[RMDB]
Chemical mapping of a 207-nucleotide RNA with 2A3 and DMS. Source: RMDB library OK3TST, as collected in RNAgym. Reactivities are given for positions 27 through 156. The RNA was probed in 150 mM KOAc, 10 mM MgCl2 and 150 mM bicine (pH 8.5) at 24 C. The DMS profile rests on 2,430 reads.
RNA sequence: GGGAACGACUCGAGUAGAGUCGAAAAUCUGUGAUAUCUCUUUUACUUGGUAUAAAAGAUAACUCAGGUAUGGACAGGAUUGAAGGUGAUAUUCCUCUUGAGUCUGAGGGUAUCCAGCAAAUUACAUUUGCUGACCUGAUGGAAGAAGAGAGUGUAGCACAGGUGCACAAUUCGUUGUGCACCUGUGAAAAGAAACAACAACAACAAC
Reactivity to 2A3 in 0.01 (KOAc 150mM, MgCl2 10mM, bicine 150mM(pH8.5), 24C), signal-to-noise 3, nucleotides 027 to 156: u030c010u020g020u050g070a040u030a080u110c040u030c000u000u060u020u080a120c090u050u220g090g030u190a080u040a110a020a030a030g030a000u040a080a050c010u030c040a000g010g020u040a060u100g020g030a010c050a070g000g050a070u030u140g090a130a030g110g000u030g020a040u030a060u140u160c000c020u000c010u000u050g060a060g130u020c020u040g020a040g000g000g020u030a060u000c010c010a000g020c010a000a020a090u090u140a060c100a160u010u030u010g000c000u000g020a020c000c020u080g020a080u110g040g020a020a020g020a000a040g010a030g010a020g050u060g030u090a020g000
Reactivity to DMS in 0.01 (KOAc 150mM, MgCl2 10mM, bicine 150mM(pH8.5), 24C), signal-to-noise 2, nucleotides 027 to 156: u000c020u010g040u020g030a210u010a080u010c010u020c020u000u000u000u000a050c030u010u020g030g010u010a080u000a020a020a140a020g050a060u000a020a090c020u010c050a020g020g060u010a070u000g030g030a100c060a170g010g000a150u000u010g030a080a090g000g020u020g000a130u010a080u010u000c030c010u000c010u000u000g020a090g010u000c060u010g000a210g020g010g050u000a030u000c160c010a020g020c030a000a000a050u000u010a090c060a300u000u000u000g020c000u000g010a060c020c020u010g010a210u000g020g010a050a050g010a060a170g000a050g030a070g000u010g030u000a100g020